Chemical mapping of a 177-nucleotide RNA with 2A3 and DMS. For DMS, 11,029 sequencing reads were counted. The RNA was probed in 150 mM KOAc, 10 mM MgCl2 and 150 mM bicine (pH 8.5) at 24 C. 2A3 adducts were read by reverse transcription with SuperScript II with manganese. Source: RMDB library OK1LIB, as collected in RNAgym.

RNA sequence: GGGAACGACUCGAGUAGAGUCGAAAAGAAGAGAAGCGCGCGAAUUGGAAACCAGCGAACCCUAUUACGCGCGCAAGGAACCGGGCCUUGGUUCGUUGGAAAGAUUAGAUAAUAUCGCUGGUAAAGACCUACUAUAGCUAUUCGUAGCUAUAGUAGGAAAAGAAACAACAACAACAAC
Reactivity to 2A3 in 0.01 (KOAc 150mM, MgCl2 10mM, bicine 150mM(pH8.5), 24C), signal-to-noise 6, nucleotides 027 to 126: g100a050a000g080a010g020a210a030g010c000g000c000g000c010g010a020a030u030u020g010g010a040a050a110c010c000a000g000c000g010a070a110c010c000c000u010a030u040u080a110c000g000c000g000c000g000c000a000a010g070g000a010a020c020c000g070g130g010c020c020u090u100g020g000u000u020c040g020u060u080g050g050a060a070a020g080a050u160u230a030g080a140u150a160a050u100a080u080c010g000c020u010g000g000u010a040a040a000g020a010
Reactivity to DMS in 0.01 (KOAc 150mM, MgCl2 10mM, bicine 150mM(pH8.5), 24C), signal-to-noise 5, nucleotides 027 to 126: g020a130a120g010a160g010a160a190g010c010g020c000g020c000g000a040a040u010u010g000g000a230a150a050c020c000a000g000c000g010a020a150c140c010c050u010a040u010u000a090c010g020c000g000c000g020c000a000a010g020g000a060a030c050c000g000g020g020c050c060u010u030g010g000u000u000c040g010u020u000g000g000a070a070a070g000a110u010u030a020g010a120u020a050a040u010a150u010c000g010c000u000g000g000u020a080a070a090g000a140